[RMDB]
RNA sequence: GGGAACGACUCGAGUAGAGUCGAAAAAUACGCCGCCACGGUGGUGAGCAGCGCCAGCAGCAGGGCAUUGCGCACUUUCGCCAGGCUUUGCCACGGCGAAACGUCAUUGCCGUGCACCAUCCGCUCGCUAAACGCACGAAUUCGUUCGUGCGUUUAGAAAAGAAACAACAACAACAAC
Reactivity to 2A3 in 0.01 (KOAc 150mM, MgCl2 10mM, bicine 150mM(pH8.5), 24C), signal-to-noise 2, nucleotides 027 to 126: a000u130a030c060g040c040c030g030c030c020a030c070g110g000u090g040g040u010g030a050g020c040a000g000c020g030c050c030a030g000c030a010g030c000a010g000g040g000c020a020u020u060g020c050g020c020a060c060u040u070u060c020g000c000c010a040g010g000c000u080u070u190g030c020c000a130c120g000g000c000g000a020a020a020c050g030u050c010a010u000u040g000c000c000g100u000g000c020a030c000c000a060u050c020c040g020c030u030c030g010
Reactivity to DMS in 0.01 (KOAc 150mM, MgCl2 10mM, bicine 150mM(pH8.5), 24C), signal-to-noise 3, nucleotides 027 to 126: a100u030a110c130g000c040c040g030c070c060a080c090g020g020u000g010g020u000g010a040g020c070a060g000c030g000c040c030a060g030c150a100g000c030a060g000g000g010c000a020u000u000g010c120g020c230a130c140u000u000u000c010g000c000c010a160g010g020c020u000u000u010g010c010c000a140c150g010g010c000g000a000a010a060c140g000u010c020a040u000u010g010c000c010g010u000g000c030a140c110c040a110u010c060c040g010c070u000c110g000